[RMDB]
RNA sequence: GGGAACGACUCGAGUAGAGUCGAAAAGUAAAACUAUUGAAGAUGCCUUAAGAAUUAGUGCUAUGCUGGAGUCUGCAGAUGUUGGUGAGAUGCUCACUUUUGACGAGAAAGCGUUUACACUUGCUAAUGUUAGUAGUUUUGGUGACUACAACCUUAGCCUCCCUGGCUAUUUCGAUAGCCAGGGAGGAAAAGAAACAACAACAACAAC
Reactivity to 2A3 in 0.01 (KOAc 150mM, MgCl2 10mM, bicine 150mM(pH8.5), 24C), signal-to-noise 2, nucleotides 027 to 156: g050u060a000a100a080a050c030u050a080u180u100g120a100a100g100a080u030g010c040c050u100u100a110a020g080a050a130u100u090a090g020u050g050c050u070a010u080g030c040u050g030g020a030g070u010c050u040g000c030a010g020a110u050g100u150u070g080g020u070g020a040g030a050u060g010c030u020c030a080c010u050u070u130u090g090a060c060g000a010g040a120a130a000g040c010g010u040u060u120a050c060a010c030u130u240g000c000u000a000a000u040g020u030u050a040g010u010a040g000u000u000u120u170g200g070u110g020a000c000u000a000c000a040a040c000c050u010u070a010g070